[RMDB]
RNA sequence: GGGAACGACUCGAGUAGAGUCGAAAACAGUGACCAGGAGUUCACUCUGCCUUGAGCUUCCGUCAGGUGAGCUCGGUGAGAUGGCCUGGUUGCUGAAGACGCCAUAUUCCGUCUCCCUUUACCGAUGCCCUAUAUUAGCGUUCGCGCUAAUAUAGGGAAAAGAAACAACAACAACAAC
Reactivity to 2A3 in 0.01 (KOAc 150mM, MgCl2 10mM, bicine 150mM(pH8.5), 24C), signal-to-noise 6, nucleotides 027 to 126: c000a000g010u000g010a000c010c000a000g000g010a000g000u300u300c000a010c000u000c000u010g020c010c000u070u300g010a000g000c000u010u020c020c020g200u210c140a100g000g080u200g050a000g000c000u000c010g000g000u130g000a030g000a010u010g010g000c010c000u000g020g010u010u000g000c000u000g010a000a020g010a000c020g040c060c050a130u100a120u280u090c040c020g000u010c020u020c020c000c020u070u100u040a130c070c060g050a060u140g050
Reactivity to DMS in 0.01 (KOAc 150mM, MgCl2 10mM, bicine 150mM(pH8.5), 24C), signal-to-noise 2, nucleotides 027 to 126: c010a000g000u000g000a030c010c000a010g010g000a030g010u020u010c020a000c010u000c000u000g030c010c000u020u010g020a010g010c000u010u010c000c020g010u020c300a160g000g020u010g000a020g010c000u000c000g010g000u000g000a010g000a030u000g000g000c030c020u000g000g000u000u010g000c020u000g000a070a130g010a090c040g000c200c100a070u000a110u010u010c110c000g010u010c020u000c000c010c010u010u000u020a110c120c050g010a130u000g020
The record gives the reactivity of an RNA of 177 nucleotides to 2A3 and DMS. The RNA was probed in 150 mM KOAc, 10 mM MgCl2 and 150 mM bicine (pH 8.5) at 24 C. 2A3 is a SHAPE reagent: it acylates the 2'-hydroxyl of flexible nucleotides of all four kinds.